The record gives the reactivity of an RNA of 177 nucleotides to 2A3 and DMS. 2A3 adducts were read by reverse transcription with SuperScript II with manganese.

[RMDB]
RNA sequence: GGGAACGACUCGAGUAGAGUCGAAAAGAUAUGGACCUUUAUACGUCGAUGAAACAGGUCGGAAACGACCUGUGGAGACGGUAACUGGGUCCUAAGUCAAAGUGCGCUAGCUUCGGCUAGCGCACAACAUCCAAAAAAUGUUCGCAUUUUUUGGAUGAAAAGAAACAACAACAACAAC
Reactivity to 2A3 in 0.01 (KOAc 150mM, MgCl2 10mM, bicine 150mM(pH8.5), 24C), signal-to-noise 2, nucleotides 027 to 126: g010a000u040a000u070g000g020a000c010c000u160u120u060a220u110a280c020g000u020c070g300a300u010g040a000a000a000c000a000g030g000u000c000g010g000a000a010a000c000g010a010c040c030u020g000u000g020g000a000g010a000c030g010g000u010a040a070c140u100g020g010g010u000c000c000u000a020a000g000u000c020a090a070a090g020u040g000c010g020c020u010a000g000c000u050u070c230g010g000c000u010a000g000c000g010c030a000c010a000a000
Reactivity to DMS in 0.01 (KOAc 150mM, MgCl2 10mM, bicine 150mM(pH8.5), 24C), signal-to-noise 3, nucleotides 027 to 126: g000a010u000a020u010g000g000a020c000c000u000u010u000a040u000a120c010g040u000c000g010a130u010g000a250a180a030c010a000g000g010u010c000g000g000a010a010a020c000g010a020c000c000u000g000u010g000g010a000g020a010c000g030g010u000a010a030c300u010g010g000g000u000c000c000u010a000a080g000u010c010a130a160a140g010u000g000c010g010c000u000a000g020c020u000u020c270g030g000c000u000a010g010c000g030c010a000c010a040a090
Description:
Values cover nucleotides 27 to 126. The DMS profile rests on 6,053 reads. DMS adducts were read by reverse transcription with MarathonRT. The reactions ran in a buffer of 150 mM KOAc, 10 mM MgCl2 and 150 mM bicine (pH 8.5), at 24 C. For 2A3, 4,925 sequencing reads were counted.